[RMDB]
RNA sequence: GGGAACGACUCGAGUAGAGUCGAAAAUCCAACCGAAACAUGUCGAAGCAUGACCUCUGCCGAGGUAGUUCGUGGGGUAGAGCGACCGAUUGGGGAGUUCAACUCCGAGAGGAGUUGUCUCCCCUGUCGAGUAGUAGUGGUUCGCCACUACUACUCGAAAAGAAACAACAACAACAAC
Reactivity to DMS in 0.01 (KOAc 150mM, MgCl2 10mM, bicine 150mM(pH8.5), 24C), signal-to-noise 3, nucleotides 027 to 126: u010c020c020a140a120c100c040g000a110a080a190c080a020u010g030u000c080g020a080a080g010c060a050u000g020a080c080c020u010c020u040g020c180c090g010a060g000g000u000a040g010u020u000c050g030u030g020g010g010g010u000a060g000a080g000c090g000a050c080c010g010a040u040u020g010g010g000g000a010g000u020u000c000a000a000c000u000c000c000g010a240g010a240g000g000a030g010u010u000g000u000c000u000c010c000c000c000u010g010u000
Reactivity to 2A3 in 0.01 (KOAc 150mM, MgCl2 10mM, bicine 150mM(pH8.5), 24C), signal-to-noise 4, nucleotides 027 to 126: u000c030c000a020a030c000c040g110a120a020a050c050a060u120g030u100c070g080a090a020g090c050a060u090g060a080c000c010u020c030u100g080c030c100g060a060g040g050u060a030g050u020u060c060g030u060g020g030g020g000u050a010g010a000g110c050g060a100c060c000g070a080u070u160g000g010g000g010a000g000u100u080c000a020a000c000u000c000c000g040a020g030a040g060g000a000g010u000u010g000u000c000u000c010c000c000c000u000g000u000